[RMDB]
RNA sequence: GGGAACGACUCGAGUAGAGUCGAAAACGUCGAGUGCAAUAUUAGUUAGCUGCCGGUUCGCGCAGCGACGCGAAUCGACUCUACUUCGCGUCGCUGCGCGAACUGGCAGUCGUUCCCGCGUGGUUUCGAUCGCGCAAAAGAAACAACAACAACAAC
Reactivity to 2A3 in 0.01 (KOAc 150mM, MgCl2 10mM, bicine 150mM(pH8.5), 24C), signal-to-noise 1, nucleotides 027 to 135: c050g070u030c010g010a020g020u070g050c040a040a070u060a100u240u110a100g170u070u100a050g030c010u020g000c000c000g020g000u000u000c030g000c010g000c140a050g010c100g000a000c050g110c040g050a020a030u110c060g040a040c040u010c000u050a030c020u000u030c020g030c050g000u000c050g030c010u040g000c000g000c000g020a010a000c010u000g000g000c000a000g000u000c000g010u000u000c000c000c000g000c010g000u030g000g020u000u050u030c100g040a000u000c000g000c020g000c030a010

Structure probing data (2A3) for a 155-nucleotide construct. The reactions ran in a buffer of 150 mM KOAc, 10 mM MgCl2 and 150 mM bicine (pH 8.5), at 24 C. The 2A3 profile rests on 1,270 reads. Reactivities are given for positions 27 through 135.